[RMDB]
RNA sequence: GGGAACGACUCGAGUAGAGUCGAAAAGAAAGGCAGCCACUGCAGCCCACGUAGCCAAUCGAGGCAUGCUUUUGCAUGCCGCCCACGACUGAGGGCAGCUGCGGCACUGAGGGCAGCUGCCGAAAGACGAGCGUAGUACUUUCGAGUACUACGCUCGAAAAGAAACAACAACAACAAC
Reactivity to 2A3 in 0.01 (KOAc 150mM, MgCl2 10mM, bicine 150mM(pH8.5), 24C), signal-to-noise 1, nucleotides 027 to 126: g090a030a060a020g020g000c020a020g000c000c080a190c160u180g010c070a060g000c040c020c000a030c010g040u020a020g000c000c010a000a030u130c140g090a110g020g000c000a010u000g000c000u200u200u200u260g000c020a000u000g000c000c010g020c000c000c000a030c060g190a050c100u110g050a140g030g080g000c000a020g000c020u010g000c000g050g000c050a040c180u190g110a190g000g100g000c000a000g000c000u000g000c000c000g020a010a040a010g090a010
Reactivity to DMS in 0.01 (KOAc 150mM, MgCl2 10mM, bicine 150mM(pH8.5), 24C), signal-to-noise 1, nucleotides 027 to 126: g020a040a070a100g010g000c010a070g020c040c100a070c080u020g010c100a080g000c070c030c040a140c050g010u000a050g020c010c050a120a120u010c200g040a070g030g000c000a000u000g010c010u000u000u010u000g020c010a000u020g000c000c010g000c020c020c010a170c160g010a080c270u000g000a120g040g030g020c000a100g010c000u000g040c080g020g000c260a060c030u000g000a070g000g020g010c050a000g020c010u000g000c010c000g000a030a100a120g060a190